[RMDB]
RNA sequence: GGGAACGACUCGAGUAGAGUCGAAAAGUCCCCACUUUCGAGUGGGGACAAUCAAAGUUAUGGCACUCGCAGCCCGCAGCGUUGGUGCUCCCACGCGGUGCAUAACUGCCUACUUCGGUAGGCAGAAGAUUAACCACUGUUUCGACAGUGGUUAAUCAAAAGAAACAACAACAACAAC
Reactivity to DMS in 0.01 (KOAc 150mM, MgCl2 10mM, bicine 150mM(pH8.5), 24C), signal-to-noise 4, nucleotides 027 to 126: g000u000c000c000c000c000a010c010u000u000u010c160g020a030g060u000g010g000g000g010a000c010a010a040u000c120a070a100a090g010u010u000a040u000g010g010c020a020c010u010c060g020c040a140g010c020c020c050g030c120a090g020c080g010u000u000g010g010u000g000c040u000c030c010c050a140c100g000c030g010g010u000g000c020a040u010a030a100c010u000g000c010c000u000a000c000u000u010c180g010g010u000a000g000g010c010a010g010a050a070
Reactivity to 2A3 in 0.01 (KOAc 150mM, MgCl2 10mM, bicine 150mM(pH8.5), 24C), signal-to-noise 5, nucleotides 027 to 126: g000u000c000c010c000c000a010c000u060u100u100c250g120a010g010u010g000g000g000g030a000c010a000a000u090c040a020a050a020g030u110u090a090u200g180g000c020a010c030u140c070g050c030a050g040c030c010c020g020c040a090g020c050g090u160u160g040g030u110g030c030u070c010c020c000a060c040g000c030g000g010u030g000c000a010u050a140a060c010u010g000c000c000u000a000c010u020u050c170g090g000u000a000g000g000c000a000g000a010a010